[RMDB]
RNA sequence: GGGAACGACUCGAGUAGAGUCGAAAACACCUGCCCAGUGUGAUAACUUUCAUAAGGCCUAGCUGGUGUGAUUCCUCCCAGAAAGGCCUGGAGGAGCCCAUAGGCAAUGCGCAAUCUGAUGGCUGGUGACUAACACCAAUUUCGAUUGGUGUUAGUCAAAAGAAACAACAACAACAAC
Reactivity to 2A3 in 0.01 (KOAc 150mM, MgCl2 10mM, bicine 150mM(pH8.5), 24C), signal-to-noise 3, nucleotides 027 to 126: c020a020c000c020u030g030c000c000c000a030g020u050g020u010g090a080u060a260a080c050u070u150u120c090a080u090a240a050g000g000c000c000u010a030g010c030u000g010g000u130g010u040g140a020u130u100c010c010u030c000c030c000a010g070a010a120a030g020g000c000c020u020g000g010a020g010g010a010g010c040c020c000a040u080a080g000g000c030a030a060u120g020c040g000c010a030a100u050c030u070g050a100u120g100g000c010u040g050g040u030
Reactivity to DMS in 0.01 (KOAc 150mM, MgCl2 10mM, bicine 150mM(pH8.5), 24C), signal-to-noise 4, nucleotides 027 to 126: c060a070c020c020u000g040c030c020c090a130g020u000g010u010g000a070u000a110a140c090u010u000u020c060a130u010a140a040g000g020c020c010u000a090g020c020u000g010g020u010g000u000g000a230u010u000c080c020u000c050c020c040a040g000a050a050a040g010g000c010c030u000g000g000a070g000g000a150g000c040c020c080a100u010a070g010g000c040a090a070u000g000c090g000c060a060a080u000c040u000g010a110u010g010g010c020u000g010g020u010